RNA sequence: GGGAACGACUCGAGUAGAGUCGAAAAGAUAUGGAAAUAAUAUUCUUGGAUUUACAUUCCACUUCGGAAACGAAUGAAUGUUGUCAGAAUUCUAUUUCCUAAGUCAAAACGGCCGUUCGCGGCCGAACGUUAGUAUAGUCUUCGGACUAUACUAACGAAAAGAAACAACAACAACAAC
Reactivity to DMS in 0.01 (KOAc 150mM, MgCl2 10mM, bicine 150mM(pH8.5), 24C), signal-to-noise 3, nucleotides 027 to 126: g010a050u010a300u010g000g000a020a010a010u000a000a060u000a030u010u000c010u010u010g010g020a030u000u000u000a010c010a000u000u000c040c120a030c190u000u000c010g000g000a120a100a160c000g000a060a020u010g000a000a000u000g000u000u010g000u000c000a000g010a040a010u000u000c130u000a010u000u000u000c000c000u010a040a210g000u000c030a070a050a130a250c030g010g000c000c000g020u010u010c150g020c000g000g030c010c000g000a010a040
Reactivity to 2A3 in 0.01 (KOAc 150mM, MgCl2 10mM, bicine 150mM(pH8.5), 24C), signal-to-noise 4, nucleotides 027 to 126: g020a010u070a040u150g000g030a040a000a000u040a010a030u040a040u080u020c030u080u230g130g010a060u280u200u160a020c000a010u000u000c020c060a160c110u010u000c000g030g030a080a110a080c000g010a000a020u300g000a000a000u000g010u020u040g020u020c020a000g010a010a010u060u010c070u050a020u000u010u000c000c010u020a130a020g060u040c040a020a020a120a200c030g000g020c020c010g040u080u100c300g010c020g160g030c060c000g000a040a010